[RMDB]
RNA sequence: GGGAACGACUCGAGUAGAGUCGAAAAGGCGAUCGAGAGGCCCUCUCAUUAAUGCGGAGAUGUCACGCUGACAGAAUGAUAUUAGAUGUCCGCUUCCGGUUGCAUCGCGGCGAUGAUUACAUAGGACAUCGAUUACCCAUUAGCUUCGGGGAAGCCACCUCAUCAUUAUCUUCGGAUAAUGAUGAGGAAAAGAAACAACAACAACAAC
Reactivity to 2A3 in 0.01 (KOAc 150mM, MgCl2 10mM, bicine 150mM(pH8.5), 24C), signal-to-noise 4, nucleotides 027 to 156: g020g010c020g030a060u050c050g020a080g030a020g200g000c010c010c000u000c000u000c000a100u050u190a050a050u120g030c040g040g020a090g020a040u040g030u030c030a020c110g000c030u040g040a010c020a060g140a100a090u110g070a040u080a080u160u180a070g030a080u030g020u000c000c020g010c000u100u050c010c030g090g010u060u060g010c020a050u060c050g010c040g130g000c060g050a060u100g020a030u110u180a060c080a120u140a110g040g000a000c000a000u000c020g000a000u030u090a050c020c010c000a040u070u110a030g030c060u030u060c080g020g000g010g020a000a020g020c000c000a030
Reactivity to DMS in 0.01 (KOAc 150mM, MgCl2 10mM, bicine 150mM(pH8.5), 24C), signal-to-noise 2, nucleotides 027 to 156: g000g020c010g030a090u010c030g020a110g030a050g020g020c020c030c020u000c060u020c070a150u000u000a050a120u010g000c050g000g040a120g020a060u000g020u000c040a040c010g000c020u000g000a210c090a130g000a100a070u000g000a070u010a030u020u000a100g010a090u000g000u000c010c010g010c060u000u010c040c030g020g020u000u000g030c040a090u000c060g020c080g000g020c050g000a090u000g000a120u000u000a100c090a110u000a140g000g000a060c010a050u000c000g060a090u000u000a060c010c010c020a040u000u000a100g000c090u000u000c040g050g010g040g010a040a120g000c010c020a100
This 207-nucleotide RNA was probed chemically with 2A3 and DMS. For DMS the reverse transcriptase was MarathonRT. Source: RMDB library OK3TST, as collected in RNAgym. Conditions: 150 mM KOAc, 10 mM MgCl2 and 150 mM bicine (pH 8.5), 24 C.